[RMDB]
RNA sequence: GGGAACGACUCGAGUAGAGUCGAAAAGGGGUCUCCUUCGAGACGAGAAUCAGCUUGGAUUUAAGUUACGACGCUCUAGGCUGAAGCCUCCACGGCCUAGAGCGUCGUAACUUUGUCAGCUGAUUAUCGUCUAAGACAGAGGAGACGGAGGCACCCAGGAAUAUAUAAUGUUCGCAUUAUAUAUUCCAAAAGAAACAACAACAACAAC
Reactivity to DMS in 0.01 (KOAc 150mM, MgCl2 10mM, bicine 150mM(pH8.5), 24C), signal-to-noise 1, nucleotides 027 to 156: g010g020g020g030u000c000u010c000c000u000u010c040g000a040g020a000c010g010a040g000a010a010u010c010a010g000c020u010u000g040g000a140u010u010u010a020a030g030u000u000a000c040g030a050c000g060c010u000c010u000a020g040g040c000u000g010a030a110g030c020c000u000c010c020a300c020g000g010c000c010u010a010g010a000g040c000g000u000c000g000u000a000a000c000u000u000u000g010u000c020a090g030c040u000g000a040u010u000a040u000c010g010u000c010u000a060a110g010a170c300a050g030a020g020g010a030g010a010c020g010g030a060g050g070c030a260c010c010c000a300